[RMDB]
Structure probing data (DMS and 2A3) for a 207-nucleotide construct. Values cover nucleotides 27 to 156.

RNA sequence: GGGAACGACUCGAGUAGAGUCGAAAACGCCUAAUAACGAACACACGAAUGUAUCUUGCGACAUUAUUAGAGUUGGGCAAAGAAGCGGGAUCGGGAGCGAGGAGCGAAGGUAUAACAGUGAUAGCACCAUUCCCAACACAGAGGGGCGACGAUGGAGACACGUCCUUUAAUUCGUUAAAGGACGUGUAAAAGAAACAACAACAACAAC
Reactivity to DMS in 0.01 (KOAc 150mM, MgCl2 10mM, bicine 150mM(pH8.5), 24C), signal-to-noise 3, nucleotides 027 to 156: c060g010c030c020u000a030a060u000a020a050c020g010a100a110c090a030c070a210c080g030a130a110u000g000u000a100u000c000u000u000g010c020g020a180c100a070u000u000a050u010u000a060g000a100g000u000u000g000g000g030c060a070a100a100g030a050a070g020c060g010g000g020a070u010c050g010g020g010a080g030c020g010a090g020g010a090g030c050g010a080a050g010g030u000a070u000a040a050c060a060g010u000g010a120u000a080g020c030a040c010c020a140u020u000c010c000c010a090a090c100a090c070a030g020a060g010g000g010g050c020g020a040c020g010a080u000g000g020a210g010
Reactivity to 2A3 in 0.01 (KOAc 150mM, MgCl2 10mM, bicine 150mM(pH8.5), 24C), signal-to-noise 5, nucleotides 027 to 156: c060g000c000c020u060a100a070u110a080a060c140g040a100a020c040a010c030a000c080g040a090a070u110g010u060a110u060c060u060u090g040c040g060a020c030a070u060u170a050u070u150a110g020a010g090u040u020g020g020g000c030a080a040a030g040a030a010g030c050g020g010g020a030u060c050g020g040g000a030g040c040g010a060g010g020a030g000c070g040a040a010g060g000u070a060u030a150a020c040a020g020u030g110a060u050a060g060c020a010c040c000a010u030u020c000c030c010a040a040c050a000c020a020g070a040g020g000g000g040c030g020a020c030g020a050u100g000g030a020g020
The 2A3 profile rests on 3,828 reads.